About this RNA
Structure probing data (DMS) for a 177-nucleotide construct. Conditions: 150 mM KOAc, 10 mM MgCl2 and 150 mM bicine (pH 8.5), 24 C.
RNA sequence: GGGAACGACUCGAGUAGAGUCGAAAAUGUCGGCCAUCGCGUUGUAGACGGCGCACCGCGGCCCGGUGGCGAGCACGGCGUUCAGAUCGGUGCUGGCCCGCACACCCGUCGAAUCCGCCAGCCCGGCUCAGUACCCGCAUUUCGAUGCGGGUACUGAAAAAGAAACAACAACAACAAC
Reactivity to DMS in 0.01 (KOAc 150mM, MgCl2 10mM, bicine 150mM(pH8.5), 24C), signal-to-noise 1, nucleotides 027 to 126: u000g030u000c120g020g010c020c000a050u000c140g000c080g000u030u000g010u000a130g000a110c170g010g000c050g030c030a120c020c020g000c030g000g020c120c000c070g020g050u000g020g030c060g000a030g040c120a100c050g000g020c090g000u010u010c110a110g010a130u010c100g010g000u000g000c070u010g000g010c000c000c000g030c110a100c100a070c060c020c000g010u040c030g000a190a090u000c070c080g000c000c050a070g020c100c020c010g020g020c130
Notes: In probing experiments dimethyl sulfate is read out at A N1 and C N3, which are open when not base-paired.